[RMDB]
RNA sequence: GGGAACGACUCGAGUAGAGUCGAAAAUAUUAGUCAGAAAUGGAUGCCAGCCGUUGCGGUAAUUUCUAUGCUUUUAAAUAUUAUACAAUUAUCAUAUUAAAUUGUUAAGUGCUGAUUUAACCAAUAAGACUAUGUAUUUAUUCGUAAAUACAUAGUCAAAAGAAACAACAACAACAAC
Reactivity to 2A3 in 0.01 (KOAc 150mM, MgCl2 10mM, bicine 150mM(pH8.5), 24C), signal-to-noise 1, nucleotides 027 to 126: u090a020u040u010a010g010u000c000a000g050a150a300a000u240g070g020a030u020g040c020c020a000g040c020c000g070u020u170g010c040g000g000u000a000a110u010u180u000c070u040a070u070g000c000u140u170u010u000a110a130a000u050a090u130u110a140u000a140c000a050a050u110u190a050u230c000a000u080a050u300u110a080a200a100u040u010g000u000u060a110a120g070u010g050c000u000g040a060u030u050u020a070a040c020c000a020a020u090a150a020

Conditions: 150 mM KOAc, 10 mM MgCl2 and 150 mM bicine (pH 8.5), 24 C. This 177-nucleotide RNA was probed chemically with 2A3. The 2A3 profile rests on 332 reads.